Source: RMDB library VIROID, as collected in RNAgym. Chemical mapping of a 177-nucleotide RNA with DMS and 2A3. The 2A3 profile rests on 2,319 reads. For DMS, 1,893 sequencing reads were counted.
[RMDB]
RNA sequence: GGGAACGACUCGAGUAGAGUCGAAAAGAGCCUUCGCGGGAUAGGAGUAAGACCAUAGCGAUGGGGGGAGAUGCUAGGAGUAAGAGGAGACCGAAGCGAGGAGGAAAGCAAAGAUAGCAACGGGGCUUCAUUACGUAAAGUUCGCUUUACGUAAUGAAAAAGAAACAACAACAACAAC
Reactivity to DMS in 0.01 (KOAc 150mM, MgCl2 10mM, bicine 150mM(pH8.5), 24C), signal-to-noise 2, nucleotides 027 to 126: g010a110g020c030c020u000u000c070g000c060g000g010g000a100u000a060g000g000a120g000u030a060a070g000a090c030c020a060u000a050g010c070g010a100u010g010g000g010g010g010g000a090g000a050u020g010c030u010a120g020g010a090g000u030a050a070g000a120g010g010a080g000a050c060c050g000a100a070g000c080g000a050g000g000a030g000g010a060a050a090g020c070a030a050a070g000a110u010a030g010c040a020a070c100g000g000g010g010c290u000
Reactivity to 2A3 in 0.01 (KOAc 150mM, MgCl2 10mM, bicine 150mM(pH8.5), 24C), signal-to-noise 1, nucleotides 027 to 126: g020a020g030c010c000u050u080c050g030c030g000g040g050a090u100a060g050g020a040g090u080a090a000g050a020c000c010a090u120a050g010c070g040a080u100g010g000g000g000g000g020a080g000a050u080g020c010u030a040g010g030a030g010u020a040a000g030a020g030g010a040g000a000c020c020g010a070a010g080c010g000a010g000g050a030g000g030a030a030a000g010c000a000a000a050g030a020u080a040g030c010a040a030c030g040g000g020g000c010u000
Values cover nucleotides 27 to 126.